Structure probing data (DMS and 2A3) for a 170-nucleotide construct. The 2A3 profile rests on 80,936 reads. The RNA was probed in 150 mM KOAc, 10 mM MgCl2 and 150 mM bicine (pH 8.5) at 24 C.
[RMDB]
RNA sequence: GGGAACGACUCGAGUAGAGUCGAAAAUUCUCGUCUUCCUCGGUCAGCCUCCUGAGUUCCUCUUCUUCCUCCCUGCUGAGGUUCUUCCCUCCCCCGGCGAGCUGCUUCUUCUUGUUCUCGAGGGCCUGCACAGUAUCGUUCGCGAUACUGAAAAGAAACAACAACAACAAC
Reactivity to DMS in 0.01 (KOAc 150mM, MgCl2 10mM, bicine 150mM(pH8.5), 24C), signal-to-noise 9, nucleotides 027 to 129: u010u010c010u000c020g000u010c060u030u020c060c030u010c020g010g000u020c080a070g030c030c010u000c020c020u000g010a130g010u010u020c010c010u020c040u000u010c010u000u000c030c000u010c010c010c020u020g000c060u020g020a110g000g030u020u010c070u010u010c030c010c000u000c010c000c000c010c010g020g030c060g000a010g000c020u000g010c070u030u000c030u020u000c020u020u020g020u000u000c050u000c030g000a060g000g000g000c040c020u000g010c110a160
Reactivity to 2A3 in 0.01 (KOAc 150mM, MgCl2 10mM, bicine 150mM(pH8.5), 24C), signal-to-noise 9, nucleotides 027 to 129: u050u010c010u000c020g050u020c020u110u040c010c010u020c010g020g030u040c050a040g030c010c010u070c000c010u050g030a050g080u050u040c010c010u030c010u050u010c000u070u030c010c020u020c010c000c010u020g030c040u030g020a050g030g000u050u030c000u030u020c000c000c000u030c000c000c000c000c000g010g010c020g010a030g010c020u040g020c000u040u030c000u050u010c000u030u100g070u070u020c020u000c020g020a060g010g010g020c000c020u030g010c060a040
For 2A3 the reverse transcriptase was SuperScript II with manganese.